[RMDB]
RNA sequence: GGGAACGACUCGAGUAGAGUCGAAAACGUGCCGUCGUGACUUACGAGGGGGAUACUAGUGCGGGUUAUAACCACGAUGUGUCUAUACUUCGUGCAUGGAUUCGUACCACCAAAAUAGUUGGUGAUCGUCUUUCACGGUUUUCGAACCGUGAAAGACAAAAGAAACAACAACAACAAC
Reactivity to DMS in 0.01 (KOAc 150mM, MgCl2 10mM, bicine 150mM(pH8.5), 24C), signal-to-noise 2, nucleotides 027 to 126: c100g020u000g040c030c060g000u000c020g010u010g000a070c130u000u010a030c040g000a050g020g000g000g010g010a110u010a030c100u000a120g000u000g000c130g020g010g000u000u000a070u010a110a220c240c000a010c030g000a050u000g010u010g000u020c100u000a100u010a070c010u010u010c030g050u000g010c020a090u000g000g000a090u010u000c070g000u000a060c050c030a030c010c020a030a040a190a080u070a160g010u000u000g010g030u000g000a050u010c110
Reactivity to 2A3 in 0.01 (KOAc 150mM, MgCl2 10mM, bicine 150mM(pH8.5), 24C), signal-to-noise 2, nucleotides 027 to 126: c010g020u070g120c030c030g100u070c010g010u070g130a180c020u110u150a020c060g020a050g050g050g020g010g040a020u040a050c100u110a000g020u010g050c130g050g000g000u150u070a140u060a190a020c000c000a010c020g020a030u060g020u020g030u060c080u000a120u080a070c000u040u050c010g000u000g000c030a010u140g080g050a020u000u090c010g000u030a040c010c030a030c000c030a000a060a040a110u230a090g260u040u040g020g040u000g040a050u110c050